[RMDB]
RNA sequence: GGGAACGACUCGAGUAGAGUCGAAAAUAAGUGACAGCUGAGGAGCCAGCUGGAUCAGAGUUCAAAAUAAGGUGACAGUCUACAAAUCCCUGGAAGACUGGAGCAACAAAAGAGGGAAUCGUUAUUUGGACACAGUGGGGAAAGUGAAUGAAAAGAAUGAUAUAGAAGUCUUCGGACUUCUAUAUCAAAAAGAAACAACAACAACAAC
Reactivity to 2A3 in 0.01 (KOAc 150mM, MgCl2 10mM, bicine 150mM(pH8.5), 24C), signal-to-noise 1, nucleotides 027 to 156: u150a000a000g050u020g030a010c020a000g000c020u040g010a010g010g020a010g030c010c010a010g010c030u010g010g000a020u040c030a020g040a010g080u070u140c060a020a060a090a090u130a080a040g120g000u010g040a050c010a020g000u040c030u010a030c020a060a120a020u020c000c000c000u010g030g030a040a010g020a010c020u020g000g020a020g010c030a000a060c000a010a040a080a030g050a020g000g020g000a000a050u000c000g000u030u030a080u110u100u080g000g040a010c020a020c030a080g020u020g020g020g000g010a000a050a030g040u060g040a000a030u080g000a020a090a000a020g200a030a060
Reactivity to DMS in 0.01 (KOAc 150mM, MgCl2 10mM, bicine 150mM(pH8.5), 24C), signal-to-noise 1, nucleotides 027 to 156: u000a150a100g010u000g010a180c060a100g040c030u000g000a060g030g000a140g040c020c040a110g050c000u000g040g000a120u000c050a070g010a240g010u000u070c010a020a090a100a160u000a120a160g010g030u020g000a130c000a100g020u010c010u020a120c030a160a090a070u000c010c010c040u000g000g020a150a070g030a100c050u000g040g000a090g000c060a070a090c020a040a130a020a090g020a070g000g010g050a030a090u000c040g060u010u000a130u000u000u000g000g000a040c020a080c040a090g000u000g000g010g040g000a010a020a120g010u040g000a050a000u010g010a040a060a050a080g010a110a190
This 207-nucleotide RNA was probed chemically with 2A3 and DMS. 2A3 adducts were read by reverse transcription with SuperScript II with manganese. For DMS the reverse transcriptase was MarathonRT. The RNA was probed in 150 mM KOAc, 10 mM MgCl2 and 150 mM bicine (pH 8.5) at 24 C. Source: RMDB library OK3TST, as collected in RNAgym.